[RMDB]
RNA sequence: GGGAACGACUCGAGUAGAGUCGAAAAACGCGAGGAUUCGUCCUCGCGUACAUAAGUCAGUUCGCCGGAUAGCUGCCUAAGUGAGUUCGCCGGAUAGCUGCCAAGCACAUAGUUUCGACUAUGUGAAGGACAUUUCAACAUUCGUGUUGAAAUGUCCAAAAGAAACAACAACAACAAC
Reactivity to DMS in 0.01 (KOAc 150mM, MgCl2 10mM, bicine 150mM(pH8.5), 24C), signal-to-noise 2, nucleotides 027 to 126: a010c000g000c000g030a020g030g010a080u000u010c190g020u000c000c000u020c000g030c020g000u010a010c200a060u010a110a130g000u010c010a020g010u000u000c110g000c010c000g010g010a050u000a050g010c020u010g030c060c080u000a060a140g000u010g010a030g030u000u010c120g000c010c000g000g000a020u040a040g030c010u000g000c070c200a110a190g000c020a000c010a030u000a000g010u000u010u000c190g040a050c000u000a010u000g010u000g010a060a090
Reactivity to 2A3 in 0.01 (KOAc 150mM, MgCl2 10mM, bicine 150mM(pH8.5), 24C), signal-to-noise 2, nucleotides 027 to 126: a000c000g000c000g010a000g050g000a040u010u010c170g040u020c050c000u000c000g000c000g000u010a000c000a060u210a030a060g050u040c000a020g000u010u030c010g000c000c000g020g000a030u010a030g020c000u200g170c020c050u220a300a080g060u080g250a000g000u040u000c030g000c010c000g000g010a010u010a000g000c010u020g000c020c030a070a010g090c020a000c000a030u010a010g000u000u050u090c170g030a010c010u000a000u000g010u010g040a020a030